[RMDB]
RNA sequence: GGGAACGACUCGAGUAGAGUCGAAAAGUAAUGGUUGCUGAGUAACGUAUAACAGCGUAAAACACCAUCGCCGGACACGAUCGAAGAGGAAAAGGUCUGUAGUAACAGUUCGCUGUUACUACAGACCCAUGGUGACACGGUUCGCCGUGUCACCAUGAAAAGAAACAACAACAACAAC
Reactivity to DMS in 0.01 (KOAc 150mM, MgCl2 10mM, bicine 150mM(pH8.5), 24C), signal-to-noise 2, nucleotides 027 to 126: g020u000a090a080u010g010g010u010u000g040c030u000g020a180g010u020a100a060c120g020u010a060u000a120a170c080a120g010c000g020u010a040a040a110a140c080a060c100c000a030u000c020g020c010c020g000g000a110c120a050c070g000a090u010c060g010a060a050g010a100g010g000a050a040a130a150g010g010u010c000u000g000u000a010g000u000a000a010c010a020g020u020u010c270g000c000u000g000u010u000a000c000u000a000c010a000g000a000c000c000
Reactivity to 2A3 in 0.01 (KOAc 150mM, MgCl2 10mM, bicine 150mM(pH8.5), 24C), signal-to-noise 1, nucleotides 027 to 126: g060u100a020a100u020g010g000u070u070g000c040u000g070a120g100u100a110a070c120g110u160a130u040a180a090c050a030g010c000g020u060a080a010a010a040c040a020c040c010a010u060c010g000c010c000g000g010a040c060a010c100g040a040u100c040g040a090a020g030a020g050g060a030a080a000a050g010g000u010c000u000g000u010a000g010u020a000a000c000a000g000u010u070c150g040c100u000g000u020u000a000c000u010a000c020a000g000a000c010c010

Source information
This 177-nucleotide RNA was probed chemically with DMS and 2A3. For 2A3 the reverse transcriptase was SuperScript II with manganese. For DMS the reverse transcriptase was MarathonRT. It was measured as part of the RMDB library RFMREP. The 2A3 profile rests on 1,239 reads. The reactions ran in a buffer of 150 mM KOAc, 10 mM MgCl2 and 150 mM bicine (pH 8.5), at 24 C.